The record gives the reactivity of an RNA of 177 nucleotides to 2A3 and DMS.
Source: RMDB library OK2TST, as collected in RNAgym.
Conditions: 150 mM KOAc, 10 mM MgCl2 and 150 mM bicine (pH 8.5), 24 C.
2A3 adducts were read by reverse transcription with SuperScript II with manganese.

RNA sequence: GGGAACGACUCGAGUAGAGUCGAAAAACAUGGGGUGAGUGUGUCUGCUUUUGCUCCAAUUGUAAAGGUGACUGUAUGUUCAUCAUUAAAUUCUGUCUUCUUUCCUUCUCAAAAAAGGUAUGAACGACGCUCUAUCAUGAUUCGUCAUGAUAGAGCGAAAAGAAACAACAACAACAAC
Reactivity to 2A3 in 0.01 (KOAc 150mM, MgCl2 10mM, bicine 150mM(pH8.5), 24C), signal-to-noise 4, nucleotides 027 to 126: a010c050a050u050g010g000g020g020u040g020a050g030u080g000u060g050u130c080u110g090c010u100u070u040u040g010c020u030c030c030a050a120u100u120g070u130a040a090a090g000g000u020g020a020c020u050g110u300a140u190g070u150u020c010a040u000c000a010u060u150a060a080a080u120u040c040u050g050u010c030u050u000c000u050u140u040c020c000u000u080c040u030c030a120a130a000a000a000a010g040g010u050a060u120g030a070a010c080g040a010
Reactivity to DMS in 0.01 (KOAc 150mM, MgCl2 10mM, bicine 150mM(pH8.5), 24C), signal-to-noise 3, nucleotides 027 to 126: a070c100a070u000g000g000g000g030u000g000a040g020u000g000u000g020u000c130u010g010c050u000u000u000u000g010c040u000c050c050a040a090u010u000g020u010a050a090a110g010g010u000g010a040c020u010g020u000a080u010g010u010u000c010a020u000c030a080u000u010a050a060a160u010u010c040u010g010u000c010u000u000c010u000u000u000c010c000u000u000c030u020c300a010a040a050a060a030a020g000g010u000a060u000g000a010a050c150g010a060